[RMDB]
RNA sequence: GGGAACGACUCGAGUAGAGUCGAAAAGAUAUGGAUAGGUUGUCAGAUACAGCUUCUUACUCGGAAACGAGUAAAUAGCUGUCUUGGAUUUACCUAUCCUAAGUCAAAAGUCGUGUUCGCACGACAAGAUACCACUCUCGUUCGCGAGAGUGGUAUCAAAAGAAACAACAACAACAAC
Reactivity to 2A3 in 0.01 (KOAc 150mM, MgCl2 10mM, bicine 150mM(pH8.5), 24C), signal-to-noise 2, nucleotides 027 to 126: g030a030u060a050u140g020g000a000u000a010g030g020u020u010g000u040c010a010g010a130u020a050c000a000g010c000u020u020c000u050u000a010c000u000c000g050g000a070a120a070c010g000a010g000u000a000a000a000u050a000g000c000u000g020u000c010u040u050g070g000a020u270u190u170a020c000c000u000a000u000c010c010u010a020a030g040u010c040a030a060a140a000g010u000c010g030u010g010u050u150c300g020c070a000c000g000a010c010a000a020
Reactivity to DMS in 0.01 (KOAc 150mM, MgCl2 10mM, bicine 150mM(pH8.5), 24C), signal-to-noise 2, nucleotides 027 to 126: g010a040u000a300u000g020g000a000u000a000g000g000u000u000g000u000c020a100g020a020u000a000c020a020g000c000u000u000c130u000u000a000c010u000c040g000g000a080a120a160c000g000a010g000u010a000a010a030u000a020g010c000u000g000u000c050u000u050g020g020a010u000u010u000a020c010c010u010a010u000c000c000u000a020a110g010u000c050a080a070a140a080g000u000c000g010u000g010u000u010c210g020c010a020c000g010a000c020a050a100

The record gives the reactivity of an RNA of 177 nucleotides to 2A3 and DMS.
The DMS profile rests on 1,382 reads.
It was measured as part of the RMDB library TTRDEL.
Reactivities are given for positions 27 through 126.
The RNA was probed in 150 mM KOAc, 10 mM MgCl2 and 150 mM bicine (pH 8.5) at 24 C.